Structure probing data (2A3 and DMS) for a 177-nucleotide construct. Reactivities are given for positions 27 through 126. For 2A3, 2,173 sequencing reads were counted. The DMS profile rests on 3,031 reads.

RNA sequence: GGGAACGACUCGAGUAGAGUCGAAAAGUGUCUGAGAGAGACUCACACUGACAGACUCUGAGAGAGUCUCACACAGUCAGUGUCUGAGUCAGUGAGACACUCUGAGUCACUCAGUCUGAGAGUCAGACAAUACCGAGAGCUUCGGCUCUCGGUAUUGAAAAGAAACAACAACAACAAC
Reactivity to 2A3 in 0.01 (KOAc 150mM, MgCl2 10mM, bicine 150mM(pH8.5), 24C), signal-to-noise 2, nucleotides 027 to 126: g020u000g000u000c000u060g060a080g010a040g000a000g010a300c000u030c010a020c000a010c000u010g030a000c010a040g000a010c000u030c010u180g100a140g000a000g000a000g160u000c000u010c010a050c020a000c000a020g020u040c010a000g030u010g030u090c080u040g000a000g020u030c000a040g030u150g050a020g000a000c000a000c030u000c030u010g040a030g080u050c000a020c070u020c020a020g090u000c020u090g070a100g010a040g180u070c030a020g020a020
Reactivity to DMS in 0.01 (KOAc 150mM, MgCl2 10mM, bicine 150mM(pH8.5), 24C), signal-to-noise 4, nucleotides 027 to 126: g020u000g000u000c010u010g020a170g030a260g000a210g000a050c000u000c000a070c040a010c000u000g020a030c040a150g000a010c000u000c010u000g010a140g010a110g020a060g020u000c000u010c200a040c170a090c300a110g010u000c010a010g020u000g000u000c130u020g010a020g000u000c050a110g010u010g000a040g000a020c040a010c000u000c050u000g000a110g010u010c050a110c070u010c050a100g010u010c070u000g000a150g010a090g020u000c010a030g000a120